This 177-nucleotide RNA was probed chemically with 2A3. The RNA was probed in 150 mM KOAc, 10 mM MgCl2 and 150 mM bicine (pH 8.5) at 24 C.
RNA sequence: GGGAACGACUCGAGUAGAGUCGAAAAGAAAAGUAUCGAUAGCGAAAGAAUACUCUCUCUCGAAGAAGCUAUCGAUACGAAAAGAAAAGAAAAGAGAGAGAGAGGAAAGAGGAAACUCGAAAGAAAAGGGAUUUCUUAUCUUCGGAUAAGAAAUCCCAAAAGAAACAACAACAACAAC
Reactivity to 2A3 in 0.01 (KOAc 150mM, MgCl2 10mM, bicine 150mM(pH8.5), 24C), signal-to-noise 1, nucleotides 027 to 126: g080a000a290a000a000g000u000a000u010c000g000a000u010a000g000c060g070a130a000a000g000a270a050u290a250c040u000c000u000c040u000c000u080c000g210a220a130g070a250a030g170c000u000a000u040c030g000a000u000a000c000g020a000a000a000a000g000a000a000a070a000g120a110a100a020a000g160a000g000a000g000a000g000a000g000a000g030g050a120a070a000g010a000g000g020a000a000a000c000u000c010g010a100a130a050g050a010a040a010a010
Record summary:
Values cover nucleotides 27 to 126. For 2A3, 552 sequencing reads were counted.